An RNA of 207 nucleotides, treated with 2A3 and read out base by base. 2A3 adducts were read by reverse transcription with SuperScript II with manganese. It was measured as part of the RMDB library M2RFPK.
[RMDB]
RNA sequence: GGGAACGACUCGAGUAGAGUCGAAAAACUGAUACCUUACGAGGUAUCAGAAUGACUUCGUGGUAGAGCGCCACGAACGGAAAAUAAAGAGAGCUCGAUUGAAACGCACCGUGUACGCACGGUGCGAAAAAGUCGAUCCAGUUCGCUGGAUCGACAACUCUCGAAUAUUGUUCGCAAUAUUCGAGAGAAAAGAAACAACAACAACAAC
Reactivity to 2A3 in 0.01 (KOAc 150mM, MgCl2 10mM, bicine 150mM(pH8.5), 24C), signal-to-noise 2, nucleotides 027 to 156: a000c010u010g000a000u000a000c000c000u080u040a080c290g140a010g010g000u000a000u000c000a000g000a010a040u140g020a030c020u000u010c020g000u020g000g000u040a060g020a000g030c030g030c020c000a000c010g000a000a000c030g080g030a110a040a040a050u140a040a140a030g150a000g000a000g000c040u010c040g110a160u030u210g030a140a120a000c000g000c010a000c000c030g010u010g030u130a010c170g000c050a000c010g000g000u000g020c010g000a000a010a000a000a000g010u000c000g000a000u000c000c000a020g050u070u080c130g010c130u010g000g000a000u000c000g000a000c000a000a000